[RMDB]
RNA sequence: GGGAACGACUCGAGUAGAGUCGAAAAAAGGGGUCUGACGCUUGGAUUUAUACAGGGACGAAACCCCAAGCAUCGAUCUAUGGCUGAAGCCUCCACGGCCAUAGGGAGCUUGGGACUGACGGUACCUGUAUUGUCAGCGUCAGACGGAGGCACCCAAGACAUGGAAAGACUUCGGUCUUUCCAUGUCAAAAGAAACAACAACAACAAC
Reactivity to 2A3 in 0.01 (KOAc 150mM, MgCl2 10mM, bicine 150mM(pH8.5), 24C), signal-to-noise 1, nucleotides 027 to 156: a000a010g160g030g090g010u000c000u000g000a000c000g020c040u090u170g150g000a040u290u300u000a040u050a000c010a000g000g010g030a000c050g030a060a000a010c000c000c000c000a000a000g030c110a170u300c010g010a020u020c000u000a000u000g000g010c010u050g040a160a010g040c010c000u000c000c000a010c000g020g030c000c000a000u000a000g000g000g000a020g030c000u000u020g000g000g000a000c020u050g150a020c070g070g070u230a030c000c000u010g000u000a080u000u140g010u090c000a000g000c000g000u000c000a000g020a000c000g000g000a000g010g000c020a040c050c000c020a030a060